Notes:
An RNA of 177 nucleotides, treated with 2A3 and read out base by base. High 2A3 reactivity points to a flexible backbone, as in loops and unpaired stretches. Source: RMDB library OK1LIB, as collected in RNAgym. Values cover nucleotides 27 to 126. The RNA was probed in 150 mM KOAc, 10 mM MgCl2 and 150 mM bicine (pH 8.5) at 24 C.

[RMDB]
RNA sequence: GGGAACGACUCGAGUAGAGUCGAAAAGCUGAGACAUUCCUCCCUGAUGGCUGCUCCAUGGAGGAAGGGCUAGGGUCUGACUUGGGAACUGCCUCCCCUUCUGGGCAGAGAGGAGGACCAGAGCAGGCGGCUAGUACGACUUCGGUCGUACUAGCCGAAAAGAAACAACAACAACAAC
Reactivity to 2A3 in 0.01 (KOAc 150mM, MgCl2 10mM, bicine 150mM(pH8.5), 24C), signal-to-noise 2, nucleotides 027 to 126: g010c030u050g010a000g000a070c030a170u070u000c000c000u070c040c000c050u090g070a040u240g120g000c030u050g010c000u070c050c030a090u190g040g010a030g000g110a020a050g020g000g010c030u200a070g070g050g010u000c000u010g100a300c070u200u210g030g040g010a040a000c010u000g030c010c000u040c000c000c000c000u030u000c000u040g030g100g000c030a020g000a020g000a020g050g010a000g010g010a000c000c070a060g000a000g200c000a030g010g030